[RMDB]
RNA sequence: GGGAACGACUCGAGUAGAGUCGAAAACAACAAGAUCAAGUAGAUAAGAUUCGUGAAAACUUAGACAAUUCAACUGUCAAAAGUAUUUCAUUAGCAAAUGAACUUGAGCGUUCAUUCAUGGAAUAUGAAUUUCCUGUGGAUUCGUCCACAGGAAAUUAAAAGAAACAACAACAACAAC
Reactivity to 2A3 in 0.01 (KOAc 150mM, MgCl2 10mM, bicine 150mM(pH8.5), 24C), signal-to-noise 1, nucleotides 027 to 126: c010a010a010c000a020a110g020a160u120c030a000a040g080u050a050g080a060u120a170a080g020a100u120u070c020g010u000g000a000a000a000a070c030u030u000a000g000a010c000a030a040u190u160c040a120a140c020u060g010u030c010a000a020a000a020g010u020a300u030u020u010c000a010u010u070a010g020c040a030a070a130u120g040a040a040c020u020u050g010a020g050c020g040u060u060c020a040u010u060c010a040u140g210g000a140a040u160a060u150g060
Reactivity to DMS in 0.01 (KOAc 150mM, MgCl2 10mM, bicine 150mM(pH8.5), 24C), signal-to-noise 2, nucleotides 027 to 126: c050a100a110c090a040a040g000a100u000c060a060a120g000u030a040g010a170u000a090a160g010a080u000u010c080g050u010g010a030a000a040a040c000u000u030a300g000a020c020a030a140u000u010c300a070a120c200u000g000u010c010a030a130a030a060g000u000a080u000u010u000c000a000u000u000a100g000c130a050a020a050u010g000a040a020c000u010u010g010a090g000c110g000u010u000c040a040u000u000c080a070u000g000g010a070a050u010a050u010g000

The record gives the reactivity of an RNA of 177 nucleotides to 2A3 and DMS.